[RMDB]
RNA sequence: GGGAACGACUCGAGUAGAGUCGAAAAUUGCUUCAAGGAAACUGACAGGUACAAAAAAGGUUGCUGGACGGAACUCUGGAAAGACUAUCUUUUGAUGGAGCCAAUGAGGCGAUAACCAACUGGCAAACUUGAAGGAUAGGUUCGCCUAUCCUUCAAGAAAAGAAACAACAACAACAAC
Reactivity to DMS in 0.01 (KOAc 150mM, MgCl2 10mM, bicine 150mM(pH8.5), 24C), signal-to-noise 2, nucleotides 027 to 126: u010u000g030c030u000u000c030a130a160g000g040a070a050a090c080u000g010a110c100a070g030g000u000a050c040a010a060a080a100a080a040g030g010u010u010g000c000u000g000g000a070c110g010g010a070a050c110u000c020u000g040g010a110a090a060g000a160c080u000a050u000c000u000u000u000u010g000a060u000g000g030a120g050c020c020a070a110u000g000a070g010g020c040g020a050u020a070a090c020c040a050a130c140u000g000g000c080a090a040a110
Reactivity to 2A3 in 0.01 (KOAc 150mM, MgCl2 10mM, bicine 150mM(pH8.5), 24C), signal-to-noise 1, nucleotides 027 to 126: u030u030g000c010u020u080c010a020a040g100g000a130a040a030c010u010g060a000c060a060g000g030u160a060c100a010a110a000a010a010a000g030g040u040u070g040c020u040g010g080a010c050g000g070a130a030c030u000c020u090g000g030a140a010a000g060a030c050u040a010u110c040u090u130u080u170g090a120u130g020g030a010g020c010c020a040a120u130g030a010g020g000c030g010a020u030a040a070c000c000a030a000c090u080g030g030c050a000a060a060
Conditions: 150 mM KOAc, 10 mM MgCl2 and 150 mM bicine (pH 8.5), 24 C. This 177-nucleotide RNA was probed chemically with DMS and 2A3. It was measured as part of the RMDB library RFMREP. Values are in units of 0.01, from 0 to 300, in steps of 10.